[RMDB]
RNA sequence: GGGAACGACUCGAGUAGAGUCGAAAACAAACAAAUGUUGAGUCGGGUCUCAAGCCAUACGAUAAAAGAAAAUUGAUACCUGUUAUUGAAGGAGCUGGAGGUGUCAUAACUGAUUAAACAAACAAAACAUGUCGUAGCUCUUCGGAGCUACGACAUGAAAAGAAACAACAACAACAAC
Reactivity to 2A3 in 0.01 (KOAc 150mM, MgCl2 10mM, bicine 150mM(pH8.5), 24C), signal-to-noise 1, nucleotides 027 to 126: c000a000a020a000c000a070a160a230u190g020u000u000g050a000g000u090c000g000g120g000u000c000u000c000a000a160g000c060c130a120u150a260c060g090a000u140a260a080a000a000g210a000a090a000a000u000u060g090a110u160a100c000c000u000g050u110u050a300u230u040g040a070a160g000g020a110g020c070u120g000g030a000g000g000u000g010u000c000a000u140a010a000c000u000g090a000u260u180a130a000a000c080a230a000a000c000a020a140a000a000